Chemical mapping of a 177-nucleotide RNA with 2A3 and DMS. For DMS, 694 sequencing reads were counted. Source: RMDB library OK2TST, as collected in RNAgym. Reactivities are rounded to 0.1 and cut off at 0 and 3. The reactions ran in a buffer of 150 mM KOAc, 10 mM MgCl2 and 150 mM bicine (pH 8.5), at 24 C.
RNA sequence: GGGAACGACUCGAGUAGAGUCGAAAAUGCGUCAAUGAAAUUGCCCAGGGAUGCCAGACGGCACCAGUAACGGCGCUGGCCGGAAAGGUGACCUUCCCGGAACUUGGUGCGUUAAUCGAUCAUGCGCGCCUUCCCUACAGUUCGCUGUAGGGAAGGCAAAAGAAACAACAACAACAAC
Reactivity to 2A3 in 0.01 (KOAc 150mM, MgCl2 10mM, bicine 150mM(pH8.5), 24C), signal-to-noise 1, nucleotides 027 to 126: u080g020c030g010u040c020a000a100u070g110a000a030a070u150u210g020c000c000c000a010g000g080g010a140u060g100c050c000a040g030a120c000g020g030c010a030c010c000a010g010u060a080a000c000g070g000c020g000c290u110g290g020c000c000g040g030a120a000a000g040g010u140g050a300c010c000u060u000c030c040c040g020g020a030a060c020u040u060g010g000u230g060c000g010u030u100a060a060u060c150g010a050u000c050a040u100g000c000g000c020
Reactivity to DMS in 0.01 (KOAc 150mM, MgCl2 10mM, bicine 150mM(pH8.5), 24C), signal-to-noise 1, nucleotides 027 to 126: u000g000c070g010u000c120a100a020u010g000a020a020a060u010u000g020c000c000c000a130g000g030g000a060u000g030c030c060a140g010a080c180g030g000c010a030c000c030a040g000u050a090a260c080g020g000c000g070c140u010g020g080c000c040g030g010a050a190a040g010g000u030g000a190c050c010u000u000c080c010c040g010g010a050a070c100u000u000g000g000u000g020c010g030u000u010a030a090u000c080g050a140u000c010a100u000g000c000g000c040